[RMDB]
RNA sequence: GGGAACGACUCGAGUAGAGUCGAAAAGAUAUGGAAACCCUAGGGAGAUCUAGGUCGGAAACGACCUUCUGAUCAUCGAUCUAGAGGUUUCCUAAGUCAAACUCGAUAAGGUUCGCCUUAUCGAGAAUCCUAGUAAACCGUUCGCGGUUUACUAGGAAAAAGAAACAACAACAACAAC
Reactivity to 2A3 in 0.01 (KOAc 150mM, MgCl2 10mM, bicine 150mM(pH8.5), 24C), signal-to-noise 2, nucleotides 027 to 126: g000a010u010a010u060g000g000a000a000a000c010c000c020u000a030g000g010g020a060g010a000u000c020u030a030g020g000u010c000g030g000a000a010a000c010g010a010c020c000u060u030c230u140g010a000u000c000a030u300c030g010a000u000c000u010a020g080a300g120g000u010u000u020c010c000u000a000a000g010u000c000a050a050a160c010u010c010g000a000u020a010a010g050g020u030u100c200g130c050c010u010u000a000u010c000g000a010g010a010a030
Reactivity to DMS in 0.01 (KOAc 150mM, MgCl2 10mM, bicine 150mM(pH8.5), 24C), signal-to-noise 2, nucleotides 027 to 126: g000a020u010a020u020g010g000a000a040a030c000c000c010u010a010g000g000g010a030g040a010u000c010u000a030g000g030u010c000g020g000a010a010a030c010g010a010c000c010u000u010c170u000g010a000u000c000a300u000c220g000a030u010c000u000a010g010a290g010g010u000u000u000c000c010u000a000a070g000u000c000a130a100a200c010u000c010g000a010u010a000a000g010g000u000u030c300g020c010c000u000u000a010u010c000g000a010g010a050a080

This 177-nucleotide RNA was probed chemically with 2A3 and DMS.
The RNA was probed in 150 mM KOAc, 10 mM MgCl2 and 150 mM bicine (pH 8.5) at 24 C.
2A3 adducts were read by reverse transcription with SuperScript II with manganese.
It was measured as part of the RMDB library TTRDES.
The DMS profile rests on 2,198 reads.